[RMDB]
This 207-nucleotide RNA was probed chemically with DMS and 2A3. Reactivities are rounded to 0.1 and cut off at 0 and 3. Conditions: 150 mM KOAc, 10 mM MgCl2 and 150 mM bicine (pH 8.5), 24 C. As a SHAPE reagent, 2A3 marks flexible, mostly unpaired nucleotides at the ribose 2'-OH. Values cover nucleotides 27 to 156. The DMS profile rests on 7,066 reads. For DMS the reverse transcriptase was MarathonRT.
RNA sequence: GGGAACGACUCGAGUAGAGUCGAAAAGGCGCGGUGUUCAUCCUGCUGGCGCUGCUGAUCGUCGGCUUCACCAUCGCCGAGCCCGCCUUUAUCACCAUCGCCAAUCUGAUGAGCAUCCUGCAGGCGGUAUCGGUCGUCGCCAUUCUCGGCGCCGGCGACUUCUUUCAAGUUUCGACUUGAAAGAAGUAAAAGAAACAACAACAACAAC
Reactivity to DMS in 0.01 (KOAc 150mM, MgCl2 10mM, bicine 150mM(pH8.5), 24C), signal-to-noise 2, nucleotides 027 to 156: g010g020c020g020c110g010g010u000g010u000u010c070a110u010c020c070u010g060c020u010g020g010c040g020c050u000g040c090u000g000a070u010c050g010u000c030g020g020c010u000u020c090a100c080c070a140u010c050g070c020c010g010a070g010c040c000c030g000c020c040u010u000u000a070u000c050a110c050c010a050u000c030g050c020c030a130a140u000c020u030g000a030u000g000a190g030c040a110u010c060c050u000g010c080a100g020g040c000g030g000u010a060u000c040g030g000u000c070g030u000c010g030c030c020a190u000u010c050u000c020g020g000c040g030c010c000g040g000c010g010
Reactivity to 2A3 in 0.01 (KOAc 150mM, MgCl2 10mM, bicine 150mM(pH8.5), 24C), signal-to-noise 6, nucleotides 027 to 156: g030g000c030g020c050g040g000u010g020u030u060c050a070u050c040c120u090g000c020u010g010g000c000g000c020u040g020c120u030g030a080u070c120g070u030c020g040g000c000u180u130c100a100c130c050a110u140c070g000c020c000g000a010g020c030c000c000g000c020c010u130u150u080a180u150c060a040c100c030a050u070c030g050c060c030a110a230u150c130u150g020a030u030g010a030g030c020a040u110c040c100u160g030c050a050g000g000c000g010g010u040a070u110c050g020g060u050c030g020u000c020g020c040c010a060u130u040c040u030c020g010g000c000g000c000c000g010g000c000g000